An RNA of 207 nucleotides, treated with DMS and 2A3 and read out base by base. Values cover nucleotides 27 to 156. For 2A3, 3,602 sequencing reads were counted. The RNA was probed in 150 mM KOAc, 10 mM MgCl2 and 150 mM bicine (pH 8.5) at 24 C.

RNA sequence: GGGAACGACUCGAGUAGAGUCGAAAAAUAGGCUCUCCAACCCAACUCCUACUCAAUACGUCCUCGUCGUACAGAACGGUAACAUGUUUUCCGAACAUCCGCGCUUGGGUAUACGAGAAUACACCUUACAGCACCACUUACUUCGGUAAGUGGUGAACUCUACAUGUCACUUCGGUGACAUGUAGAGAAAAGAAACAACAACAACAAC
Reactivity to DMS in 0.01 (KOAc 150mM, MgCl2 10mM, bicine 150mM(pH8.5), 24C), signal-to-noise 1, nucleotides 027 to 156: a120u010a050g010g050c020u010c010u000c020c030a060a140c040c040c020a040a090c010u030c020c010u010a100c050u000c000a030a080u000a060c030g020u010c000c000u010c050g050u000c080g000u010a170c040a160g010a050a080c010g010g000u020a020a040c140a150u020g000u000u010u000u010c060c060g000a080a060c070a080u010c020c080g010c030g000c100u000u000g000g010g040u000a070u000a070c070g020a170g000a060a070u010a010c050a140c040c030u000u000a080c030a080g010c010a020c010c000a030c010u000u000a010c000u000u000c270g070g020u000a000a020g030u010g030g020u000g000a000a030
Reactivity to 2A3 in 0.01 (KOAc 150mM, MgCl2 10mM, bicine 150mM(pH8.5), 24C), signal-to-noise 5, nucleotides 027 to 156: a000u100a040g050g000c010u010c010u010c060c020a060a050c010c000c000a030a040c030u060c030c020u050a060c010u040c070a070a080u070a140c040g040u050c010c020u040c030g040u020c020g020u060a030c030a060g050a110a040c030g010g020u060a070a070c050a110u070g040u040u060u050u050c050c040g020a030a020c010a060u040c010c030g050c020g030c120u060u070g040g040g000u050a050u030a060c040g000a010g030a080a000u090a080c060a150c020c010u070u050a060c030a110g020c000a030c000c000a000c000u000u000a000c000u010u030c050g080g000u010a000a000g000u000g010g000u000g000a000a010